[RMDB]
RNA sequence: GGGAACGACUCGAGUAGAGUCGAAAACAUGGUAUGGCCUCGCAUCCGGCCUACCAACAGAAUCAACAACUUAGGAUGCGGUGGGCGAGAGCCCUAAGAAGGAGUCUCCACGCCUGGGGAGCUCCGUAUGACUUAAUGUAUUACCAGGCGUAUACAACAUCAGUACGACGUUCGCGUCGUACUGAUGAAAAGAAACAACAACAACAAC
Reactivity to 2A3 in 0.01 (KOAc 150mM, MgCl2 10mM, bicine 150mM(pH8.5), 24C), signal-to-noise 2, nucleotides 027 to 156: c030a030u100g000g020u140a180u300g000g000c000c000u000c000g000c020a000u000c000c000g000g000c000c000u000a000c020c000a050a000c080a100g190a020a020u220c060a050a230c050a160a020c000u070u230a020g010g000a010u010g000c020g000g030u040g000g000g050c000g010a000g010a000g060c000c000c000u030a150a020g050a050a050g000g010a000g000u100c030u000c030c000a000c000g030c000c000u010g000g020g000g000a010g000c000u000c030c000g010u010a180u050g060a030c030u070u120a070a080u270g120u270a130u110u170a080c000c000a000g000g010c000g010u020a010u010a010c040a040a000
Chemical mapping of a 207-nucleotide RNA with 2A3. Source: RMDB library OK3TST, as collected in RNAgym. For 2A3 the reverse transcriptase was SuperScript II with manganese.